Structure probing data (2A3 and DMS) for a 207-nucleotide construct. The 2A3 profile rests on 3,539 reads. For DMS, 2,561 sequencing reads were counted. As a SHAPE reagent, 2A3 marks flexible, mostly unpaired nucleotides at the ribose 2'-OH.
[RMDB]
RNA sequence: GGGAACGACUCGAGUAGAGUCGAAAAUGUGAGACGCUGGGAUAGACAGGCAACCUGGCAGCAUCGAUCAUACUGAAGCGCGCACGGUAUGGGAGCUGCCCUGUUGCCGUCUAUCCUGUGCUGAAGCGCGCACGGCAACCGAAAGGUGCGGGAUAAACGAUAGAAGGUUGUUCGCAACCUUCUAUCGAAAAGAAACAACAACAACAAC
Reactivity to 2A3 in 0.01 (KOAc 150mM, MgCl2 10mM, bicine 150mM(pH8.5), 24C), signal-to-noise 3, nucleotides 027 to 156: u160g040u030g030a090g030a040c030g000c020u070g000g000g000a000u000a000g040a060c200a250g050g000c000a000a000c000c000u010g010g000c010a000g000c020a110u300c150g080a130u140c020a000u010a000c000u020g090a240a060g000c000g000c010g010c000a030c060g010g000u000a000u010g020g030g080a140g000c000u000g000c000c000c000u010g000u010u000g000c010c000g010u010c000u000a000u000c000c000u000g010u000g000c010u010g020a100a040g000c000g020c000g010c030a030c010g010g000c000a010a020c020c010g070a070a050a000g040g010u010g000c000g000g020g010a050u200a160a090a030
Reactivity to DMS in 0.01 (KOAc 150mM, MgCl2 10mM, bicine 150mM(pH8.5), 24C), signal-to-noise 1, nucleotides 027 to 156: u000g010u000g000a150g000a080c030g010c050u010g050g000g010a040u000a020g000a020c030a100g060g000c030a020a030c010c090u010g040g080c000a000g030c000a280u000c220g000a130u010c010a040u000a020c000u010g030a100a090g000c020g030c030g030c000a300c000g010g030u000a010u010g000g050g000a070g040c030u000g000c000c020c020u020g000u000u000g010c010c030g010u000c040u000a000u000c010c010u000g000u000g020c020u000g010a090a080g030c000g030c000g000c000a300c020g020g010c000a050a040c000c030g000a130a090a160g000g010u000g000c000g040g040g030a170u010a100a030a210
The reactions ran in a buffer of 150 mM KOAc, 10 mM MgCl2 and 150 mM bicine (pH 8.5), at 24 C. Values are in units of 0.01, from 0 to 300, in steps of 10. It was measured as part of the RMDB library RNAMAK.